Source information
Conditions: 150 mM KOAc, 10 mM MgCl2 and 150 mM bicine (pH 8.5), 24 C. Chemical mapping of a 177-nucleotide RNA with DMS and 2A3. Reactivities are given for positions 27 through 126. For DMS, 1,678 sequencing reads were counted. Source: RMDB library 15KREP, as collected in RNAgym.

[RMDB]
RNA sequence: GGGAACGACUCGAGUAGAGUCGAAAACUCCCCGUUCCUGGAGAAGGGAGACUCGGGAACGCCUAGCAUCUGAGGGACGAAGCCGCCCCCGGGCGCUCCCCUCGGAGAUCCACUGGGUGGGUUCACAGUUCUAUGUAAACUUCGGUUUACAUAGAACAAAAGAAACAACAACAACAAC
Reactivity to DMS in 0.01 (KOAc 150mM, MgCl2 10mM, bicine 150mM(pH8.5), 24C), signal-to-noise 3, nucleotides 027 to 126: c220u000c000c000c000c030g020u000u010c010c000u000g020g020a090g010a140a030g010g000g000a100g000a110c110u000c050g000g000g000a100a070c030g010c020c030u000a030g010c160a120u000c020u030g010a040g000g000g010a200c120g020a060a300g000c040c060g010c070c000c030c080c260g000g020g000c010g020c010u000c050c010c010c000u000c010g010g000a040g000a100u010c100c160a090c050u000g020g010g010u000g010g030g000u000u000c050a070c150a100
Reactivity to 2A3 in 0.01 (KOAc 150mM, MgCl2 10mM, bicine 150mM(pH8.5), 24C), signal-to-noise 1, nucleotides 027 to 126: c020u030c000c000c000c000g010u000u020c000c010u050g150g040a050g000a100a060g090g050g020a050g020a020c020u030c030g050g010g020a010a000c010g030c010c000u050a040g030c010a090u010c010u010g010a020g000g000g020a020c030g110a090a020g060c120c060g000c010c020c010c050c050g030g010g000c010g000c010u020c000c010c000c000u000c000g010g000a000g010a020u050c040c040a040c060u050g130g040g000u050g040g080g000u060u020c080a080c030a080